An RNA of 177 nucleotides, treated with 2A3 and DMS and read out base by base. The RNA was probed in 150 mM KOAc, 10 mM MgCl2 and 150 mM bicine (pH 8.5) at 24 C.

RNA sequence: GGGAACGACUCGAGUAGAGUCGAAAAUCAAACGAUUUCGAUCGUUUGAAACGGACCACUCCUGCGGGAGUUAAGGCCAUACGGACAGCCGGGUCCACUCCCAGUCAUUCGGUUUCGACCGAAUGAACAUGUGAAUAUGGUUCGCCAUAUUCACAUGAAAAGAAACAACAACAACAAC
Reactivity to 2A3 in 0.01 (KOAc 150mM, MgCl2 10mM, bicine 150mM(pH8.5), 24C), signal-to-noise 8, nucleotides 027 to 126: u010c000a010a000a000c010g010a010u040u070u190c230g100a020u010c000g000u000u000u010g010a020a000a010c070g000g010a010c010c000a020c020u010c000c000u060g030c280g090g010g000a000g010u030u170a060a030g010g000c010c010a100u140a210c130g100g060a040c060a030g020c000c000g020g000g000u000c010c000a020c030u010c000c000c000a000g100u030c000a000u000u000c000g030g000u030u050u140c220g080a030c000c000g000a000a000u000g000a000a040
Reactivity to DMS in 0.01 (KOAc 150mM, MgCl2 10mM, bicine 150mM(pH8.5), 24C), signal-to-noise 9, nucleotides 027 to 126: u000c000a000a000a000c000g010a010u000u000u010c180g020a020u000c000g010u000u000u000g000a010a090a100c170g010g000a020c000c010a130c010u000c000c000u000g030c160g040g010g000a020g010u000u010a090a150g010g010c000c050a180u010a150c190g010g010a090c200a170g010c020c010g000g040g000u000c000c010a140c160u000c000c000c010a180g000u000c000a000u000u000c000g000g000u000u000u010c200g010a030c000c000g000a010a000u000g000a020a160
Overview: For 2A3, 38,474 sequencing reads were counted. For DMS, 19,643 sequencing reads were counted. DMS (dimethyl sulfate) methylates the pairing face of unpaired adenines and cytosines.